[RMDB]
RNA sequence: GGGAACGACUCGAGUAGAGUCGAAAAUCGAUCCCUGCGGGCACUCCGUCCCCCCGGCGAUGGGCUCCGUGACUGGGCGAGCAGACACGGCGCGCAGGCCGAUUUUCCGCCCCGGGCUUCGCGUCCGGAUUUUCGUACUAUUCGUAGUACGAAAAUCAAAAGAAACAACAACAACAAC
Reactivity to DMS in 0.01 (KOAc 150mM, MgCl2 10mM, bicine 150mM(pH8.5), 24C), signal-to-noise 6, nucleotides 027 to 126: u010c040g000a070u010c190c010c000u000g000c030g000g000g020c060a090c080u020c070c050g000u030c020c010c020c030c040c060g000g000c110g010a120u010g000g010g020c040u010c020c010g020u000g010a120c020u000g000g000g000c090g000a100g000c040a020g010a090c030a030c050g010g010c170g000c010g010c020a030g000g020c180c010g000a050u010u000u000u010c080c180g010c040c030c010c000g000g010g000c010u000u040c140g010c100g000u000c010c010g000
Reactivity to 2A3 in 0.01 (KOAc 150mM, MgCl2 10mM, bicine 150mM(pH8.5), 24C), signal-to-noise 9, nucleotides 027 to 126: u020c000g010a080u090c010c000c000u000g000c020g000g060g000c040a030c100u090c040c050g070u110c030c000c000c010c010c020g090g030c070g140a160u150g010g050g000c030u000c020c020g030u030g040a070c040u050g000g030g090c090g030a070g080c040a000g030a030c020a000c070g040g000c030g000c010g000c040a000g020g000c010c000g000a000u020u010u020u020c020c030g060c010c000c000c000g000g010g000c020u130u130c180g020c050g050u000c000c000g000

Conditions: 150 mM KOAc, 10 mM MgCl2 and 150 mM bicine (pH 8.5), 24 C. Chemical mapping of a 177-nucleotide RNA with DMS and 2A3. DMS adducts were read by reverse transcription with MarathonRT. Source: RMDB libraries RFM100 and RFMREP, as collected in RNAgym. For 2A3 the reverse transcriptase was SuperScript II with manganese.